[RMDB]
RNA sequence: GGGAACGACUCGAGUAGAGUCGAAAAUCCUGUAUGGGAAAGGGAUAAAAUGUUUUAAUCCUGUAUGGGAAAGGGAUAAAAUGUUUUAAUCCUGUAUGGGAAAGGGAUAAAAAUGUUUACUCCUUUUACUCCUUUAUAAAGGUAUGGGAAAGGGAUAUCGCGCGUGCUCAUUCGUGAGCACGCGCGAAAAAGAAACAACAACAACAAC
Reactivity to 2A3 in 0.01 (KOAc 150mM, MgCl2 10mM, bicine 150mM(pH8.5), 24C), signal-to-noise 1, nucleotides 027 to 156: u040c010c000u020g060u060a030u030g000g010g050a100a120a060g020g000g030a010u030a030a010a010a000u020g000u000u000u000u020a090a040u010c000c000u050g030u100a070u100g250g070g040a040a130a100g020g010g000a000u020a010a000a050a000u020g030u000u000u000u000a080a080u000c000c000u010g050u030a060u010g000g000g030a030a080a000g030g010g020a000u110a010a100a020a000a000u040g010u050u000u000a060c030u040c000c000u050u000u000u000a020c010u090c010c000u030u090u020a160u100a120a130a000g030g010u070a060u130g010g060g080a110a000a000g060g000g000a040u050a020